Description: Structure probing data (2A3) for a 177-nucleotide construct. It was measured as part of the RMDB library OK1LIB. Values cover nucleotides 27 to 126.
[RMDB]
RNA sequence: GGGAACGACUCGAGUAGAGUCGAAAACAAGAUUUUAAAAAACUGUUUAACAAGGUUCCUAUUGUUACAGAUGGGAGGGUCAAACUCAAUAAAGGAUAUUUGUUCGACUUUGUUAUUAGUUUGAUGCUGCGACAAAACAGUUCGCUGUUUUGUCGCAAAAAGAAACAACAACAACAAC
Reactivity to 2A3 in 0.01 (KOAc 150mM, MgCl2 10mM, bicine 150mM(pH8.5), 24C), signal-to-noise 2, nucleotides 027 to 126: c000a080a000g170a080u050u180u290u300a150a090a000a000a000a000c000u030g050u210u080u050a000a000c000a000a070g000g000u000u300c000c000u050a040u000u130g010u030u050a020c010a000g000a000u070g040g040g110a040g030g100g000u040c050a000a130a000c010u010c070a010a010u100a150a020a000g090g000a000u000a150u290u110u300g030u120u080c040g000a000c050u000u000u080g010u000u010a070u000u220a070g040u020u000u000g000a030u040g060c020